[RMDB]
RNA sequence: GGGAACGACUCGAGUAGAGUCGAAAAGAUAUGGAUCGUUGAUAAGCAACAGCUUAAGGAUCGGAAACGAUCCUAAGACAUGCUUUAAACGAUCCUAAGUCAAAAGGAUUACGUUCGCGUAAUCCAAGUAGGAUAACUUGUUCGCAAGUUAUCCUACAAAAGAAACAACAACAACAAC
Reactivity to DMS in 0.01 (KOAc 150mM, MgCl2 10mM, bicine 150mM(pH8.5), 24C), signal-to-noise 5, nucleotides 027 to 126: g010a020u000a140u010g000g000a010u000c010g020u000u000g010a150u010a010a010g020c010a100a070c260a130g010c000u000u010a040a130g020g000a010u000c010g020g000a040a030a070c010g000a010u000c000c000u000a010a010g000a030c030a300u010g010c000u010u000u000a140a020a010c000g010a010u010c000c010u000a000a060g000u010c030a110a060a130a110g010g000a020u000u000a000c000g000u000u010c260g010c010g030u000a000a000u000c000c000a040a060
Reactivity to 2A3 in 0.01 (KOAc 150mM, MgCl2 10mM, bicine 150mM(pH8.5), 24C), signal-to-noise 6, nucleotides 027 to 126: g010a010u030a000u050g010g010a000u010c000g000u000u040g090a120u090a300a010g000c140a060a150c100a270g040c020u070u020a240a180g010g010a000u000c000g000g010a020a020a000c000g000a000u010c000c010u000a000a000g000a010c060a170u300g000c000u020u020u030a060a030a000c010g000a000u000c000c000u000a000a000g000u000c020a060a060a070a180g010g000a000u010u010a010c010g010u050u110c300g000c010g140u000a000a010u000c000c010a000a010

Conditions: 150 mM KOAc, 10 mM MgCl2 and 150 mM bicine (pH 8.5), 24 C. This 177-nucleotide RNA was probed chemically with DMS and 2A3. The DMS profile rests on 6,255 reads. The 2A3 profile rests on 18,283 reads. It was measured as part of the RMDB library TTRDES.